[RMDB]
RNA sequence: GGGAACGACUCGAGUAGAGUCGAAAAAGGCACUUCGCAAUGUGUGCUCAAACAUUGCUUAUUCAAACACGCUUCACAAUGUGCGACAACGAAACAUUGUUAUAAGAGCUAAUGUUUUAACAUUGGCAAAACCGAGUUAGCUUCGGCUAACUCGGAAGUUUGACGGAGACUUCGGUCUCCGUCAAACAAAAGAAACAACAACAACAAC
Reactivity to 2A3 in 0.01 (KOAc 150mM, MgCl2 10mM, bicine 150mM(pH8.5), 24C), signal-to-noise 2, nucleotides 027 to 156: a030g140g020c000a010c010u040u050c020g000c000a010a010u000g010u000g000u020g010c130u070c130a040a030a000c000a020u000u000g000c060u100u120a230u170u200c120a030a100a070c040a020c080g010c000u000u000c000a000c020a000a000u000g000u000g030c030g060a110c140a300a030c070g080a040a010a010c000a000u000u000g010u030u030a240u050a140a080g060a000g020c000u000a000a000u000g060u020u130u090u250a110a010c000a000u000u000g000g000c000a020a020a020a020c000c000g000a000g000u000u000a000g000c000u030u030c180g020g000c000u000a000a010c000u000c000g000g020a000a020

This 207-nucleotide RNA was probed chemically with 2A3.
Values cover nucleotides 27 to 156.
The RNA was probed in 150 mM KOAc, 10 mM MgCl2 and 150 mM bicine (pH 8.5) at 24 C.